[RMDB]
Description:
This 177-nucleotide RNA was probed chemically with DMS and 2A3. For DMS the reverse transcriptase was MarathonRT. For 2A3 the reverse transcriptase was SuperScript II with manganese.
RNA sequence: GGGAACGACUCGAGUAGAGUCGAAAAGGCGCGACGUUCGCGUCGCGCCAAAGCGCCUUGCCUCCUUCGGGCCAGAAACAGGCACAGGGACCGGAGGCAACAAAAGUACUUCGUUCGCGAAGUACAACGGUAAAUUAAUCUUCGGAUUAAUUUACCGAAAAGAAACAACAACAACAAC
Reactivity to DMS in 0.01 (KOAc 150mM, MgCl2 10mM, bicine 150mM(pH8.5), 24C), signal-to-noise 2, nucleotides 027 to 126: g030g040c000g080c030g050a030c060g050u010u010c180g010c020g090u040c000g000c020g120c010c010a010a020a040g000c300g010c090c000u000u010g030c020c020u000c000c030u000u000c110g020g010g000c000c010a040g000a120a100a180c300a020g010g000c010a070c080a130g000g000g000a060c130c110g000g010a010g000g010c010a050a000c090a040a070a060a120g000u000a010c000u000u000c000g020u010u010c120g010c000g000a010a000g020u000a010c000a040a090
Reactivity to 2A3 in 0.01 (KOAc 150mM, MgCl2 10mM, bicine 150mM(pH8.5), 24C), signal-to-noise 2, nucleotides 027 to 126: g050g000c010g050c040g010a070c050g060u120u170c250g020c020g110u060c000g080c050g000c000c000a000a040a000g040c050g030c000c010u010u010g000c000c000u020c010c000u070u130c070g050g030g000c040c000a070g080a090a250a040c120a140g040g020c040a030c060a150g180g000g050a020c060c100g030g000a000g020g050c010a000a000c020a010a050a000a020g010u000a000c000u000u000c000g040u040u060c160g020c000g110a000a000g000u000a000c000a000a020